[RMDB]
RNA sequence: GGGAACGACUCGAGUAGAGUCGAAAAGAUAUGGACACGGACGAGCUAGAUACGGUACAGAGCUGUGGUCGGAAACGACCAUACAGCGACGAAGUACGCGUAUCUAGCUCGUCCGUGUCCUAAGUCAGCGAUAAUGAUAGUUCGCUAUCAUUAUCGCAAAAGAAACAACAACAACAAC
Reactivity to DMS in 0.01 (KOAc 150mM, MgCl2 10mM, bicine 150mM(pH8.5), 24C), signal-to-noise 1, nucleotides 027 to 126: g050a080u000a300u000g020g000a000c000a010c000g000g020a030c000g020a000g000c030u060a020g020a030u000a010c000g020g050u010a010c000a040g000a180g040c000u000g050u000g000g000u030c000g020g010a120a050a300c030g090a020c010c000a070u010a100c030a030g000c010g010a170c260g030a070a140g010u000a020c000g080c000g010u020a000u000c000u000a000g000c010u000c000g000u000c020c010g000u010g000u000c020c010u010a000a100g010u000c080a120